[RMDB]
RNA sequence: GGGAACGACUCGAGUAGAGUCGAAAAACGAAGAUGGAAUGAAAAUACUAACAGUCAAGAGUCCAGACCAUCAGAUCAAGGUUCUCAAACUCCUAGACCAAAUCAAGCAGGUUCUGGGGUGCGUGGCGACCACACUUUCUUUCGAGAAAGUGUGGUCAAAAGAAACAACAACAACAAC
Reactivity to 2A3 in 0.01 (KOAc 150mM, MgCl2 10mM, bicine 150mM(pH8.5), 24C), signal-to-noise 1, nucleotides 027 to 126: a010c070g060a010a000g050a000u020g000g010a000a010u060g060a010a100a070a100u250a010c030u070a250a050c010a070g140u050c040a170a050g010a020g070u050c050c010a000g000a020c000c000a030u020c030a030g010a050u090c050a100a070g140g010u020u020c070u000c000a040a070a030c020u050c020c010u070a010g000a000c020c010a020a000a100u220c010a050a040g160c110a060g090g050u140u020c000u020g000g010g010g010u030g020c020g160u040g050g010c070
Reactivity to DMS in 0.01 (KOAc 150mM, MgCl2 10mM, bicine 150mM(pH8.5), 24C), signal-to-noise 1, nucleotides 027 to 126: a140c100g000a090a070g010a040u000g020g050a220a050u060g000a060a030a060a160u010a070c000u030a080a130c170a170g060u030c140a090a070g000a000g010u000c100c050a050g020a300c020c010a010u010c020a020g040a070u000c120a010a110g000g010u010u010c020u000c000a030a020a150c080u020c020c000u000a000g010a010c010c000a080a100a070u000c230a040a100g000c190a120g000g000u000u000c000u000g010g010g010g010u010g000c170g000u000g000g010c200